Conditions: 150 mM KOAc, 10 mM MgCl2 and 150 mM bicine (pH 8.5), 24 C.
This 177-nucleotide RNA was probed chemically with DMS and 2A3.
DMS (dimethyl sulfate) methylates the pairing face of unpaired adenines and cytosines.
2A3 is a SHAPE reagent: it acylates the 2'-hydroxyl of flexible nucleotides of all four kinds.
Reactivities are given for positions 27 through 126.
For 2A3, 990 sequencing reads were counted.
Source: RMDB library VIROID, as collected in RNAgym.
For 2A3 the reverse transcriptase was SuperScript II with manganese.
RNA sequence: GGGAACGACUCGAGUAGAGUCGAAAACCGGGCCGAAGGGUUGAGUAGCACACAGAGGGAGAAAGCCACACGGAGAUGGGUAGAGAAAUCACCUCCAGAGGACCCCUUCAGCGAACAGAAGACGCUCGACAGUAGUAUUGUUCGCAAUACUACUGUCAAAAGAAACAACAACAACAAC
Reactivity to DMS in 0.01 (KOAc 150mM, MgCl2 10mM, bicine 150mM(pH8.5), 24C), signal-to-noise 2, nucleotides 027 to 126: c040c000g000g010g000c040c020g020a130a070g010g000g030u000u000g010a090g010u000a060g010c070a080c140a110c070a110g000a100g000g000g020a120g000a090a080a160g010c040c030a060c120a210c110g010g030a040g030a050u000g000g000g010u000a090g000a140g000a090a070a060u010c000a060c020c000u000c030c020a110g000a180g010g000a150c040c020c010c040u000u000c050a060g010c040g010a080a110c080a070g020a080a070g000a120c220g010c110u000c200
Reactivity to 2A3 in 0.01 (KOAc 150mM, MgCl2 10mM, bicine 150mM(pH8.5), 24C), signal-to-noise 1, nucleotides 027 to 126: c010c000g020g050g030c000c010g080a030a000g070g020g040u070u050g050a040g050u150a030g060c050a000c000a020c050a100g010a030g000g050g040a130g050a090a100a010g060c000c000a080c040a020c080g030g050a070g030a090u120g030g000g030u160a100g090a040g050a270a120a040u040c020a040c010c010u030c040c010a030g020a020g040g040a080c000c010c050c000u010u030c020a000g030c020g020a070a060c040a050g070a120a000g020a060c050g080c100u130c120